[RMDB]
RNA sequence: GGGAACGACUCGAGUAGAGUCGAAAACAAUCAACAAUAUGGUUUGUGUAGUUAUGCUGAAAAUCGUUGAGGUUGUAUGGAAUAGGUUAACCGUAAGAGCUUAAGUUGAAAAACUUUAAAAUUAAUCAAAAUCAUGUACACUUCGGUGUACAUGAAACUUGAUAAUAUUGUUCGCAAUAUUAUCAAGAAAAGAAACAACAACAACAAC
Reactivity to DMS in 0.01 (KOAc 150mM, MgCl2 10mM, bicine 150mM(pH8.5), 24C), signal-to-noise 2, nucleotides 027 to 156: c040a090a120u000c020a070a140c060a070a150u000a090u000g010g000u000u000u010g060u010g020u000a060g020u000u000a040u030g050c020u000g010a110a080a080a060u000c040g030u010u000g010a170g000g020u000u000g030u010a070u010g000g010a060a090u000a120g030g000u000u010a020a050c020c010g020u000a100a300g010a040g010c040u000u000a050a210g020u010u000g000a090a120a100a080a030c020u000u020u000a060a080a040a080u010u000a030a070u000c010a060a030a110a110u000c000a010u010g000u000a000c000a020c000u000u000c290g050g030u000g020u010a020c000a010u000g000a000a020a140
Reactivity to 2A3 in 0.01 (KOAc 150mM, MgCl2 10mM, bicine 150mM(pH8.5), 24C), signal-to-noise 4, nucleotides 027 to 156: c030a000a090u150c030a000a070c020a060a100u080a070u210g040g020u040u070u040g050u020g020u030a080g020u080u080a060u140g020c060u070g060a090a040a030a060u070c040g010u030u030g010a020g000g040u030u030g010u050a160u080g020g040a070a040u050a080g020g030u060u050a050a030c020c020g030u050a080a030g010a010g060c030u100u060a040a000g010u030u030g030a140a010a010a000a000c040u150u130u200a060a110a060a080u170u200a080a070u060c030a020a110a020a100u020c000a000u000g000u000a000c000a010c030u010u040c140g050g000u000g000u000a000c000a000u000g010a000a000a000